Background: An RNA of 177 nucleotides, treated with DMS and 2A3 and read out base by base. Source: RMDB library OK2TRN, as collected in RNAgym. Conditions: 150 mM KOAc, 10 mM MgCl2 and 150 mM bicine (pH 8.5), 24 C.
[RMDB]
RNA sequence: GGGAACGACUCGAGUAGAGUCGAAAAGCGCGCGAGAGGCGGGACUAGUCUUGGCCGUCGUCUUCCAGGACGGCGCGAACGGAGUCGGGGUGCAUACCGUGGUUCCACGGAGGAACGCUCCGCCUUGCGAGGCUUAUAGAUUCGUCUAUAAGCCUCGAAAAGAAACAACAACAACAAC
Reactivity to DMS in 0.01 (KOAc 150mM, MgCl2 10mM, bicine 150mM(pH8.5), 24C), signal-to-noise 5, nucleotides 027 to 126: g010c050g030c040g000c030g010a100g010a110g020g010c030g000g000g010a070c060u000a100g020u000c050u000u000g030g020c050c010g010u010c010g010u000c010u010u010c130c190a170g000g010a040c020g010g000c010g020c050g000a080a090c170g010g000a040g000u000c020g010g000g020g010u000g000c070a190u010a050c010c000g010u000g000g010u020u020c120c010a040c020g010g000a090g000g000a130a260c070g010c010u000c000c000g000c050c010u000u000g010
Reactivity to 2A3 in 0.01 (KOAc 150mM, MgCl2 10mM, bicine 150mM(pH8.5), 24C), signal-to-noise 3, nucleotides 027 to 126: g050c010g000c010g000c020g050a090g020a030g080g030c020g020g020g020a040c020u040a030g070u020c030u060u100g140g000c050c000g010u020c010g020u000c010u190u090c050c030a040g040g040a020c030g030g030c000g010c020g010a080a010c050g080g020a010g000u040c020g000g020g000g000u040g010c030a020u060a100c000c010g090u000g020g110u300u150c150c010a010c010g030g000a010g020g030a060a060c020g010c000u010c000c000g040c000c000u000u030g030
The DMS profile rests on 8,134 reads. For 2A3, 5,975 sequencing reads were counted.